An RNA of 207 nucleotides, treated with DMS and 2A3 and read out base by base.
Values cover nucleotides 27 to 156.
The DMS profile rests on 4,001 reads.
Source: RMDB library M2RFPK, as collected in RNAgym.
The RNA was probed in 150 mM KOAc, 10 mM MgCl2 and 150 mM bicine (pH 8.5) at 24 C.

RNA sequence: GGGAACGACUCGAGUAGAGUCGAAAAAGACGGAAACCCAUCGACUGUCACCAGAUGCGGCAUCACCUGAUCACUGAUGGCUCAACGGUAUCCGGCGGUACAACUGAAUACUUGUAGCUGCCUUUUGAAAAGGAGUUCAUCUUCGGAUGAACUCCAACACUUUAAUAACCUUCGGGUUAUUAAAGUGAAAAGAAACAACAACAACAAC
Reactivity to DMS in 0.01 (KOAc 150mM, MgCl2 10mM, bicine 150mM(pH8.5), 24C), signal-to-noise 2, nucleotides 027 to 156: a110g020a100c050g010g000a110a130a120c050c030c000a030u000c020g010a120c040u000g020u000c030a080c020c000a080g020a050u000g010c080g010g000c050a090u000c040a050c010c000u000g030a120u010c070a130c060u000g000a060u010g010g010c020u000c020a090a090c050g010g030u000a060u000c010c040g040g020c030g030g010u010a060c100a090a060c020u000g010a070a060u010a030c060u040u000g050u010a070g000c000u010g030c000c100u010u000u020u000g020a040a080a150a140g010g000a030g010u010u010c000a010u010c000u000u000c300g030g000a030u000g010a000a010c000u000c000c000a000a080
Reactivity to 2A3 in 0.01 (KOAc 150mM, MgCl2 10mM, bicine 150mM(pH8.5), 24C), signal-to-noise 4, nucleotides 027 to 156: a000g050a020c060g030g030a070a050a030c000c000c020a040u060c050g100a090c060u070g010u070c030a020c050c040a040g020a100u070g040c020g030g010c020a040u050c010a030c010c010u030g040a070u080c020a010c070u030g010a020u060g080g020c020u030c040a070a070c060g040g000u050a080u050c060c040g010g000c010g020g010u030a020c020a040a010c060u140g080a120a070u120a180c040u060u040g020u050a040g100c020u010g020c000c000u090u110u070u170g090a070a070a040a050g000g000a000g000u000u000c000a000u000c000u010u040c110g030g000a000u000g000a000a000c000u000c000c000a000a000